Structure probing data (DMS and 2A3) for a 177-nucleotide construct. For 2A3, 574 sequencing reads were counted.
RNA sequence: GGGAACGACUCGAGUAGAGUCGAAAAGAAGAGGAAAACAAUAACGUGAGCUUUGAGCUAGAUAACAUAUCGAACGAAGAUGUGGAUGAAGAUACCACUCCCUUUAACGUUUGAAUAGUGGGCAACAAUCCUAGCCACGGUUCGCCGUGGCUAGGAUAAAAGAAACAACAACAACAAC
Reactivity to DMS in 0.01 (KOAc 150mM, MgCl2 10mM, bicine 150mM(pH8.5), 24C), signal-to-noise 2, nucleotides 027 to 126: g020a000a050g090a010g000g020a110a020a010a070c010a070a050u000a030a080c180g010u020g000a100g010c040u000u020u100g010a050g010c000u020a000g010a130u020a010a070c110a040u000a050u040c020g030a000a030c050g000a000a170g000a070u000g000u010g000g070a090u020g060a120a060g000a180u000a100c100c000a060c020u030c010c000c000u000u000u000a030a110c070g060u000u000u000g000a030a030u010a010g040u000g000g000g000c120a030a050c130a090
Reactivity to 2A3 in 0.01 (KOAc 150mM, MgCl2 10mM, bicine 150mM(pH8.5), 24C), signal-to-noise 2, nucleotides 027 to 126: g050a050a000g090a000g000g130a130a000a000a010c060a000a180u210a130a130c090g050u090g150a000g010c000u050u130u120g010a010g000c030u220a000g030a150u130a120a080c080a110u170a000u140c000g020a020a060c060g000a040a000g000a000u070g030u010g050g030a050u060g040a070a150g030a100u060a130c000c000a020c050u150c000c000c000u060u000u000a040a040c050g020u000u030u030g040a070a130u140a020g050u090g000g030g040c000a020a020c000a050

Annotation
Values are in units of 0.01, from 0 to 300, in steps of 10. The RNA was probed in 150 mM KOAc, 10 mM MgCl2 and 150 mM bicine (pH 8.5) at 24 C. The DMS profile rests on 1,544 reads. Reactivities are given for positions 27 through 126.